[RMDB]
RNA sequence: GGGAACGACUCGAGUAGAGUCGAAAAUAAAAUAGCGUACUAGAGACGCUGAUCUCUAGAUAACAACGAACUCUAGAGAUACGGUCCAAUUGAAUACAAGGACAGUUGGACCUAUUCGUAGAAAAAACGGAAUAGUGUAGUUCGCUACACUAUUCCGAAAAGAAACAACAACAACAAC
Reactivity to 2A3 in 0.01 (KOAc 150mM, MgCl2 10mM, bicine 150mM(pH8.5), 24C), signal-to-noise 2, nucleotides 027 to 126: u160a000a080a020a030u120a030g000c010g000u010a040c020u100a090g060a070g010a160c000g050c020u010g040a040u000c010u010c000u010a010g020a030u130a100a030c130a020a070c060g050a020a030c010u030c000u000a020g020a000g010a020u020a040c060g010g000u000c000c000a000a000u010u010g060a060a010u140a190c090a090a000g090g120a040c000a020g000u000u000g010g000a000c000c010u030a080u050u160c080g030u130a100g160a030a120a020a000a020a000
Reactivity to DMS in 0.01 (KOAc 150mM, MgCl2 10mM, bicine 150mM(pH8.5), 24C), signal-to-noise 1, nucleotides 027 to 126: u000a060a030a130a070u010a050g070c000g000u000a070c030u010a130g030a270g000a010c000g010c050u000g000a060u000c000u000c000u000a000g010a060u010a060a040c050a120a050c150g000a120a090c170u000c000u000a000g000a070g000a030u000a020c110g000g010u000c000c000a020a000u010u000g000a060a090u020a090c270a090a070g030g000a300c000a000g000u000u000g000g000a020c030c010u000a060u030u000c090g000u030a140g010a000a070a100a090a040a040
Chemical mapping of a 177-nucleotide RNA with 2A3 and DMS. The DMS profile rests on 704 reads. The reactions ran in a buffer of 150 mM KOAc, 10 mM MgCl2 and 150 mM bicine (pH 8.5), at 24 C. 2A3 adducts were read by reverse transcription with SuperScript II with manganese. For 2A3, 1,343 sequencing reads were counted.